Description
This 177-nucleotide RNA was probed chemically with 2A3 and DMS. Values cover nucleotides 27 to 126. The DMS profile rests on 5,269 reads. DMS adducts were read by reverse transcription with MarathonRT. For 2A3, 1,035 sequencing reads were counted.
RNA sequence: GGGAACGACUCGAGUAGAGUCGAAAAUAUAGGGUGAAAAAGGAACAACGACCUGUAAGAGUGCCGGACCUGUGGUGGGUUGAUUCACGGCCACGCGUCCAGGUGUAUCGUGCCUGCCCGCGCGAGCCGGAUACCCUCAUUUCGAUGAGGGUAUCCGAAAAGAAACAACAACAACAAC
Reactivity to 2A3 in 0.01 (KOAc 150mM, MgCl2 10mM, bicine 150mM(pH8.5), 24C), signal-to-noise 2, nucleotides 027 to 126: u250a040u110a060g020g040g040u060g110a000a060a000a070a010g060g000a030a010c010a000a000c030g160a090c040c000u000g090u180a090a000g070a020g060u100g020c010c000g040g000a020c000c010u000g000u010g050g020u060g020g100g000u050u050g170a230u190u210c080a080c120g020g000c000c000a000c000g050c010g000u000c010c050a050g000g030u080g010u020a130u080c010g010u020g000c000c000u100g000c000c000c000g000c000g000c000g000a000g060c000
Reactivity to DMS in 0.01 (KOAc 150mM, MgCl2 10mM, bicine 150mM(pH8.5), 24C), signal-to-noise 3, nucleotides 027 to 126: u020a070u030a070g010g030g030u020g020a040a050a010a070a050g000g000a070a060c070a090a090c140g000a050c040c020u010g010u010a090a090g000a070g000u020g020c050c040g000g000a040c050c030u000g020u010g010g000u010g000g000g030u000u000g000a070u000u010c070a100c050g010g000c030c010a040c010g000c240g010u000c080c010a100g000g030u010g000u040a050u010c110g010u010g000c020c020u020g010c110c020c030g000c030g010c060g010a100g040c080